Chemical mapping of a 207-nucleotide RNA with 2A3.
[RMDB]
RNA sequence: GGGAACGACUCGAGUAGAGUCGAAAAGGGACUGGCCCGAUGAAGCCCGGCAACCUAACUUUAUUUAACCGUAAAGUGAAGGUGCUAAUUCCAGCAAAAUGGUGUAUUCCGUUUUGGUAGAUAAGAGAAGCGUGACAUGAGUUCGCUCAUGUCACAAGAGCACCUAAAUCUUCGGAUUUAGGUGCUCAAAAGAAACAACAACAACAAC
Reactivity to 2A3 in 0.01 (KOAc 150mM, MgCl2 10mM, bicine 150mM(pH8.5), 24C), signal-to-noise 1, nucleotides 027 to 156: g000g000g000a040c020u050g010g000c020c000c050g000a040u060g070a060a010g080c000c000c000g040g030c010a080a140c000c000u000a000a000c020u000u030u000a000u040u050u090a050a040c000c060g000u000a000a000a000g000u060g030a130a020g000g020u000g000c000u010a020a010u130u040c000c000a020g010c050a090a040a000a020u030g000g010u070g070u090a110u200u070c000c010g020u040u040u000u000g060g010u180a140g020a180u150a080a070g070a010g000a220a060g080c060g070u000g000a000c000a000u000g010a000g030u000u240c210g030c030u000c000a000u000g000u000c000a000c000a000a000

2A3 adducts were read by reverse transcription with SuperScript II with manganese.
The RNA was probed in 150 mM KOAc, 10 mM MgCl2 and 150 mM bicine (pH 8.5) at 24 C.
The 2A3 profile rests on 607 reads.